[RMDB]
RNA sequence: GGGAACGACUCGAGUAGAGUCGAAAACAGUAUGCCUUCGGGCAUACUGAAACCAGAGGGUAUGUGGCCCACGCUCCCAUGCGUGCCGGGAAUCCCAUCCCAAAACGGAUGUCUUCGGACAUCCGAACCUUAGGCAUCACUUCGGUGAUGCCUAAGGAAAAGAAACAACAACAACAAC
Reactivity to DMS in 0.01 (KOAc 150mM, MgCl2 10mM, bicine 150mM(pH8.5), 24C), signal-to-noise 1, nucleotides 027 to 126: c000a020g000u000a030u010g020c000c000u000u000c210g070g000g050c000a000u040a000c010u010g000a070a050a060c070c070a130g010a090g000g000g000u010a030u000g020u000g030g000c150c040c090a050c040g000c010u010c140c070c130a140u000g000c010g000u000g020c170c090g000g000g010a040a150u000c000c000c000a110u000c000c010c000a040a060a050a200c030g010g000a040u000g030u000c000u000u050c120g080g010a000c020a020u010c000c000g000a000a040
Reactivity to 2A3 in 0.01 (KOAc 150mM, MgCl2 10mM, bicine 150mM(pH8.5), 24C), signal-to-noise 2, nucleotides 027 to 126: c020a000g020u000a000u000g000c000c010u040u120c280g070g000g000c000a000u020a000c010u000g010a060a000a010c020c020a050g110a120g090g020g010u240a010u160g110u140g050g010c000c040c010a000c010g030c010u160c060c030c010a040u160g010c020g030u020g040c100c050g010g000g050a030a090u090c020c000c000a030u050c000c000c000a000a100a030a040c030g000g010a010u010g000u000c020u010u110c190g100g000a000c000a000u070c000c000g000a000a000